Structure probing data (2A3 and DMS) for a 177-nucleotide construct. 2A3 adducts were read by reverse transcription with SuperScript II with manganese. The 2A3 profile rests on 1,413 reads. Conditions: 150 mM KOAc, 10 mM MgCl2 and 150 mM bicine (pH 8.5), 24 C. The data come from the RNA Mapping Database (RMDB), library RFMREP.
[RMDB]
RNA sequence: GGGAACGACUCGAGUAGAGUCGAAAAGGGCAACGUUUAAAAUCACCGGCUGCCAGGCGUCGCGCUCCGCCAGUUUUCGGGAAUAACCGCGGGCAACCAGAAAACCGCCCACGCCGCCCAGCACGGCGUCAAUAGAGCAGUUCGCUGCUCUAUUGACAAAAGAAACAACAACAACAAC
Reactivity to 2A3 in 0.01 (KOAc 150mM, MgCl2 10mM, bicine 150mM(pH8.5), 24C), signal-to-noise 2, nucleotides 027 to 126: g010g000g000c040a090a030c100g010u090u230u210a200a200a050a080u120c040a030c080c070g000g000c050u030g010c030c020a020g070g040c010g020u060c060g000c030g020c060u060c060c010g020c030c020a020g010u050u020u080u050c020g030g030g020a130a050u110a060a050c000c010g010c010g030g000g000c010a010a040c000c010a040g110a040a070a000a000c010c020g000c020c000c000a000c020g020c000c010g000c000c000c000a020g030c040a000c050g100g000c070
Reactivity to DMS in 0.01 (KOAc 150mM, MgCl2 10mM, bicine 150mM(pH8.5), 24C), signal-to-noise 2, nucleotides 027 to 126: g020g010g000c030a050a060c080g000u000u000u000a020a100a100a130u000c090a090c080c010g020g000c030u000g000c040c050a050g020g020c030g000u020c050g010c210g000c050u000c070c040g010c060c050a070g000u000u000u000u010c030g010g000g000a100a060u010a120a070c090c060g010c140g000g000g010c030a070a050c030c020a100g020a060a030a030a080c070c120g000c010c020c010a080c050g000c030c010g000c060c040c080a130g020c060a090c100g010g000c140